[RMDB]
RNA sequence: GGGAACGACUCGAGUAGAGUCGAAAAGUCAUCCGGGCCCUAAGGUAGAAUAGAACCCCGGGGGGUGAUCCACCAGGAGAUGAACGGAAAAAUCACCUCCAGAGGACCCCUUCAGCGAACAGAAGAGUAAGCUUUACCUUCGGGUAAAGCAAAAGAAACAACAACAACAAC
Reactivity to 2A3 in 0.01 (KOAc 150mM, MgCl2 10mM, bicine 150mM(pH8.5), 24C), signal-to-noise 4, nucleotides 027 to 129: g040u020c020a070u040c030c000g040g030g010c000c000c010u040a060a020g030g020u020a020g060a110a080u060a080g070a090a050c000c010c010c010g000g000g000g030g000g000u000g030a140u000c020c000a020c010c040a050g020g050a070g050a060u120g030a070a040c060g060g050a150a090a030a010a000u010c010a010c000c000u010c000c010a000g010a040g020g020a000c010c000c000c000u010u080c010a010g050c010g040a040a010c010a080g100a090a000g040a080g030u090a080a030
Reactivity to DMS in 0.01 (KOAc 150mM, MgCl2 10mM, bicine 150mM(pH8.5), 24C), signal-to-noise 4, nucleotides 027 to 129: g030u010c070a080u020c020c000g000g000g020c040c060c060u030a000a030g020g000u030a080g020a070a180u030a150g000a080a130c050c030c000c050g080g050g040g010g020g000u010g000a070u050c030c090a230c090c060a160g050g000a000g020a120u000g040a100a100c110g060g000a030a070a100a160a080u010c010a000c000c000u020c060c020a120g000a030g030g020a080c010c010c000c000u030u080c060a000g000c030g020a000a000c080a040g030a040a040g000a070g030u020a100a120
This 170-nucleotide RNA was probed chemically with 2A3 and DMS. Reactivities are given for positions 27 through 129. 2A3 adducts were read by reverse transcription with SuperScript II with manganese.